[RMDB]
RNA sequence: GGGAACGACUCGAGUAGAGUCGAAAAACAUUGGCCUUCGGGCCAAUGUACUGGAAAUAAAGCCGAAAGGCUACGCAUUCCUUAUUUGGCGAAAGCGUGCGAGAUUAUGUAAGUUCGCUUACAUAAAGUUUAGCUAGAUUUUCGAAUCUAGCUAAACAAAAGAAACAACAACAACAAC
Reactivity to DMS in 0.01 (KOAc 150mM, MgCl2 10mM, bicine 150mM(pH8.5), 24C), signal-to-noise 5, nucleotides 027 to 126: a050c000a000u000u000g010g020c000c000u000u020c190g060g010g020c000c000a010a000u000g010u000a050c120u000g000g000a070a080a060u020a060a090a040g030c000c000g010a110a080a120g010g010c010u000a020c050g010c030a140u000u000c010c010u000u000a110u000u000u000g010g010c110g010a060a040a070g010c040g000u000g000c120g000a120g000a160u000u000a000u000g000u010a000a000g020u000u000c270g000c000u000u000a000c010a010u000a010a010a110
Reactivity to 2A3 in 0.01 (KOAc 150mM, MgCl2 10mM, bicine 150mM(pH8.5), 24C), signal-to-noise 5, nucleotides 027 to 126: a000c010a000u000u000g000g000c000c030u040u050c260g040g010g000c000c000a000a000u000g000u000a000c020u040g070g130a030a070a120u200a070a180a020g000c000c010g060a060a030a010g000g000c010u010a000c020g000c010a030u020u060c000c000u090u130a240u170u180u210g160g000c100g040a090a020a000g010c020g020u030g040c050g040a150g020a140u060u060a010u030g000u000a010a000g020u010u110c230g010c040u000u000a000c000a020u030a030a110a050